RNA sequence: GGGAACGACUCGAGUAGAGUCGAAAACAACGAUAUUCGUGUACCGCGACGGUCUGCUGUCGAGGCUGACGAUGUCGGCGCCCCGUGCACGCAGAGUGCGCACCAGCGCCUCGCCCAGGUGACCGGAAGUAUUUACUGCGUUCGCGCAGUAAAUACUAAAAGAAACAACAACAACAAC
Reactivity to 2A3 in 0.01 (KOAc 150mM, MgCl2 10mM, bicine 150mM(pH8.5), 24C), signal-to-noise 2, nucleotides 027 to 126: c020a040a000c030g020a030u030a090u140u130c030g010u020g070u140a040c000c040g010c030g010a010c020g040g040u050c110u300g200c000u060g020u070c030g020a050g060g000c090u140g040a020c000g030a030u060g020u040c020g030g000c030g070c000c010c000c030g010u040g000c030a020c050g080c060a040g030a010g170u140g020c030g010c020a060c050c040a000g000c010g000c020c020u020c040g020c000c010c000a050g000g100u040g030a080c000c010g050g050a010
Reactivity to DMS in 0.01 (KOAc 150mM, MgCl2 10mM, bicine 150mM(pH8.5), 24C), signal-to-noise 2, nucleotides 027 to 126: c150a110a160c060g010a000u000a030u000u010c010g020u010g010u020a060c020c010g000c010g000a040c000g010g020u010c190u030g000c020u000g000u010c020g000a050g000g000c030u010g000a020c000g010a040u000g010u020c020g000g020c140g010c050c020c050c100g030u000g050c030a030c020g010c110a130g010a140g000u000g010c000g000c040a130c170c210a140g010c040g000c000c020u000c060g010c060c080c050a110g000g000u010g000a090c020c030g000g010a200
An RNA of 177 nucleotides, treated with 2A3 and DMS and read out base by base.
The RNA was probed in 150 mM KOAc, 10 mM MgCl2 and 150 mM bicine (pH 8.5) at 24 C.
The DMS profile rests on 2,163 reads.
For DMS the reverse transcriptase was MarathonRT.